[RMDB]
RNA sequence: GGGAACGACUCGAGUAGAGUCGAAAAUGUGCGCACCGUCGGUGGCUCCAGAAGACAUUGCGGUAACGUUACGGUCUCGCUGCCGGCAUGUCGCGCUGGUGACCCCAUCGCAUGCGGCGAUUGCUCACAGCGGGUAGGCAUUCGUGCCUACCCGCUGAAAAGAAACAACAACAACAAC
Reactivity to DMS in 0.01 (KOAc 150mM, MgCl2 10mM, bicine 150mM(pH8.5), 24C), signal-to-noise 1, nucleotides 027 to 126: u000g010u000g020c040g030c030a060c180c120g010u000c050g000g030u000g020g020c010u010c190c090a070g040a160a040g000a040c000a040u010u000g000c020g010g010u010a030a090c020g020u010u000a050c170g000g000u000c030u000c070g000c020u000g010c030c000g000g010c000a080u000g010u000c080g040c090g010c010u010g010g020u060g000a180c120c070c040c040a060u000c070g020c130a090u000g020c090g010g000c000g000a040u000u000g000c090u000c090a130
Reactivity to 2A3 in 0.01 (KOAc 150mM, MgCl2 10mM, bicine 150mM(pH8.5), 24C), signal-to-noise 1, nucleotides 027 to 126: u030g000u010g000c000g020c000a000c040c100g030u040c010g000g040u020g040g000c040u000c100c020a170g050a290a020g010a070c000a000u000u100g030c010g070g040u080a110a030c020g000u000u080a040c220g090g020u000c040u020c030g000c020u000g030c000c000g000g020c000a000u020g040u100c040g000c020g000c000u020g030g150u100g060a200c020c050c000c010a020u050c000g070c030a040u210g120c050g080g070c040g140a110u010u100g040c020u040c080a070
Source: RMDB library OK2TST, as collected in RNAgym. Chemical mapping of a 177-nucleotide RNA with DMS and 2A3. For DMS, 1,067 sequencing reads were counted. In probing experiments dimethyl sulfate is read out at A N1 and C N3, which are open when not base-paired. Conditions: 150 mM KOAc, 10 mM MgCl2 and 150 mM bicine (pH 8.5), 24 C. DMS adducts were read by reverse transcription with MarathonRT. For 2A3 the reverse transcriptase was SuperScript II with manganese.